Structure probing data (DMS and 2A3) for a 177-nucleotide construct. Conditions: 150 mM KOAc, 10 mM MgCl2 and 150 mM bicine (pH 8.5), 24 C. For 2A3 the reverse transcriptase was SuperScript II with manganese.

[RMDB]
RNA sequence: GGGAACGACUCGAGUAGAGUCGAAAAAAAAAAGUAAGUAAGAGCGCUAGGCGGAUGCCUUGGCUUCUAGAGACGAUGAAGGACGUGAUAAGCUGCGAUAAGUUACGGUAAGCUGCUAUAUGCUUUGACUAGCAGCGAAGUUCGCUUCGCUGCUAGUAAAAGAAACAACAACAACAAC
Reactivity to DMS in 0.01 (KOAc 150mM, MgCl2 10mM, bicine 150mM(pH8.5), 24C), signal-to-noise 1, nucleotides 027 to 126: a000a020a110a000a070a170g000u000a020a000g000u000a050a070g010a000g030c030g010c010u000a060g000g040c000g010g000a100u050g010c010c010u000u020g010g030c040u000u000c000u000a090g000a050g000a040c060g050a050u060g020a070a100g030g000a130c120g000u020g010a020u010a030a080g000c000u000g010c040g000a060u000a020a000g000u010u020a070c100g010g010u000a030a080g020c000u000g000c000u030a030u030a030u020g000c020u000u000u000g020
Reactivity to 2A3 in 0.01 (KOAc 150mM, MgCl2 10mM, bicine 150mM(pH8.5), 24C), signal-to-noise 1, nucleotides 027 to 126: a000a000a000a000a000a000g120u100a040a000g030u090a160a000g060a000g070c130g000c130u000a000g020g020c040g210g080a110u250g000c000c000u000u000g030g030c000u000u000c020u080a020g000a000g000a020c060g050a020u090g000a020a020g080g000a000c010g060u030g000a010u050a100a010g040c030u070g000c060g050a030u000a050a020g000u070u040a060c030g050g040u000a000a000g000c000u000g020c020u050a000u000a020u290g040c000u060u000u000g030